Record summary
Chemical mapping of a 177-nucleotide RNA with DMS and 2A3. 2A3 adducts were read by reverse transcription with SuperScript II with manganese. The RNA was probed in 150 mM KOAc, 10 mM MgCl2 and 150 mM bicine (pH 8.5) at 24 C. Values cover nucleotides 27 to 126. For DMS, 15,440 sequencing reads were counted.
RNA sequence: GGGAACGACUCGAGUAGAGUCGAAAAAUGUCUGCUGCUUCAGAUCUGCAUGGAAGUUGGAAGUUUGGAUAUGCAGGAUGUCAGAUUUAUGCUGGAUUGAAUAUCUUUUUUGGAAUGGCAAGUAUUGACUCUGUUACUGAUUCGUCAGUAACAGAGUAAAAGAAACAACAACAACAAC
Reactivity to DMS in 0.01 (KOAc 150mM, MgCl2 10mM, bicine 150mM(pH8.5), 24C), signal-to-noise 7, nucleotides 027 to 126: a060u000g000u000c030u000g010c050u000g010c050u000u000c050a070g010a080u010c040u010g010c050a060u010g010g000a070a090g010u000u000g010g010a090a080g000u000u000u000g010g010a170u000a040u000g010c050a050g000g000a070u010g000u000c040a060g010a070u000u010u010a050u030g010c040u000g000g000a080u000u000g000a080a070u000a060u010c010u000u000u000u000u000u000g010g010a040a060u000g010g010c050a040a060g010u000a070u000u010g010
Reactivity to 2A3 in 0.01 (KOAc 150mM, MgCl2 10mM, bicine 150mM(pH8.5), 24C), signal-to-noise 4, nucleotides 027 to 126: a000u050g040u000c020u040g000c010u030g010c000u030u020c010a000g020a150u000c020u030g010c000a030u060g030g040a070a070g070u140u120g070g060a070a080g010u050u160u100g040g020a040u030a020u110g000c000a000g040g060a050u040g070u050c020a020g020a070u030u160u090a100u220g050c020u030g000g070a090u050u060g040a060a020u070a050u160c020u060u080u040u020u090u060g050g040a120a030u050g030g000c040a060a020g000u040a060u070u110g010